[RMDB]
RNA sequence: GGGAACGACUCGAGUAGAGUCGAAAAAUAAAACAGCGAAGGGGGGACGGAGAAGGCUAUGUUGGCCGGGCGACGGUUGUCCCGGUUUAAGCGUGUAGGCUGGUUUUCCAGGCAAAUCCAAAAAAAAGUGUUUAUUCUAGUUCGCUAGAAUAAACACAAAAGAAACAACAACAACAAC
Reactivity to DMS in 0.01 (KOAc 150mM, MgCl2 10mM, bicine 150mM(pH8.5), 24C), signal-to-noise 2, nucleotides 027 to 126: a100u030a040a030a080a050c130a070g000c050g000a070a000g010g030g020g010g000g000a050c120g000g020a050g030a110a110g010g000c000u000a050u000g020u000u010g010g030c000c010g030g010g000c300g010a050c120g050g000u010u000g000u030c000c010c010g000g000u010u010u010a030a080g040c000g000u000g010u010a050g010g010c010u000g010g000u000u010u010u010c020c000a170g000g010c080a070a040a050u030c020c020a000a020a010a030a080a010a070a180

Record summary
An RNA of 177 nucleotides, treated with DMS and read out base by base. It was measured as part of the RMDB library M2PK90.